[RMDB]
RNA sequence: GGGAACGACUCGAGUAGAGUCGAAAAAGUUAAAACAUUCACAGGUUACCGUGCGCAACAUAAUGAUGCUGUUGGACCAACAAAAGGGGGCGUGCGUUUCCACCCAGAUGUUGAUGAAGAAGAAGUAUCAAUUAGAGCCGUUCGCGGCUCUAAUUGAAAAAGAAACAACAACAACAAC
Reactivity to DMS in 0.01 (KOAc 150mM, MgCl2 10mM, bicine 150mM(pH8.5), 24C), signal-to-noise 2, nucleotides 027 to 126: a090g000u020u000a050a020a080a100c080a070u000u050c070a100c160a070g000g020u000u000a040c070c080g000u000g010c060g030c040a100a050c040a070u020a040a130u020g010a000u000g040c010u010g030u000u000g000g020a030c130c010a040a050c140a060a100a060a080g020g000g000g000g060c060g000u020g000c030g030u000u010u040c050c000a180c040c010c040a110g010a080u010g000u010u010g040a030u050g020a140a100g010a090a150g000a060a040g000u000a100
Reactivity to 2A3 in 0.01 (KOAc 150mM, MgCl2 10mM, bicine 150mM(pH8.5), 24C), signal-to-noise 1, nucleotides 027 to 126: a010g300u300u070a180a230a010a080c110a110u240u240c100a080c000a060g030g030u000u030a000c000c000g030u040g110c000g030c000a030a030c000a090u270a170a140u300g150a000u140g000c030u030g040u220u040g060g030a100c000c000a020a000c050a070a140a000a020g000g000g000g060g000c000g090u050g000c090g020u000u060u000c060c100a060c000c010c000a020g020a020u040g000u000u030g050a170u090g080a000a180g060a000a000g140a020a000g020u060a000
Structure probing data (DMS and 2A3) for a 177-nucleotide construct. The data come from the RNA Mapping Database (RMDB), library OK1LIB. The RNA was probed in 150 mM KOAc, 10 mM MgCl2 and 150 mM bicine (pH 8.5) at 24 C. For 2A3 the reverse transcriptase was SuperScript II with manganese. The 2A3 profile rests on 337 reads.